[RMDB]
RNA sequence: GGGAACGACUCGAGUAGAGUCGAAAAGAUAUGGAUUCAUGCCGAUAAGAGGUGUUCGGAAACGAACAUACCUCUUUUGACGGCAUGAUCCUAAGUCAAAAGAUGGAGGUGUUCGCACCUCCAUCAAGAUGAAAGUAGCGUUCGCGCUACUUUCAUCAAAAGAAACAACAACAACAAC
Reactivity to 2A3 in 0.01 (KOAc 150mM, MgCl2 10mM, bicine 150mM(pH8.5), 24C), signal-to-noise 2, nucleotides 027 to 126: g020a020u090a020u150g000g010a030u220u280c020a010u020g010c000c020g070a110u110a260a030g000a000g010g020u000g020u000u000c030g000g060a070a030a010c010g000a010a000c000a010u090a020c000c010u000c050u030u030u030u050g050a020c000g010g000c010a000u020g010a000u020c010c000u020a080a020g040u010c020a090a000a040a120g000a020u010g010g030a000g000g030u010g040u110u140c290g010c090a000c000c000u050c000c000a010u010c000a000a000
Reactivity to DMS in 0.01 (KOAc 150mM, MgCl2 10mM, bicine 150mM(pH8.5), 24C), signal-to-noise 3, nucleotides 027 to 126: g030a030u010a300u010g010g000a010u000u000c010a000u010g010c000c000g000a180u000a030a020g000a020g010g010u000g000u000u000c000g020g000a110a060a200c010g000a010a000c000a050u000a090c050c000u000c000u000u000u010u010g010a210c080g000g000c000a000u000g010a000u000c000c000u000a010a090g010u000c030a110a090a090a150g000a010u000g000g010a010g000g010u000g020u000u010c230g010c000a010c000c000u000c000c000a000u000c000a010a090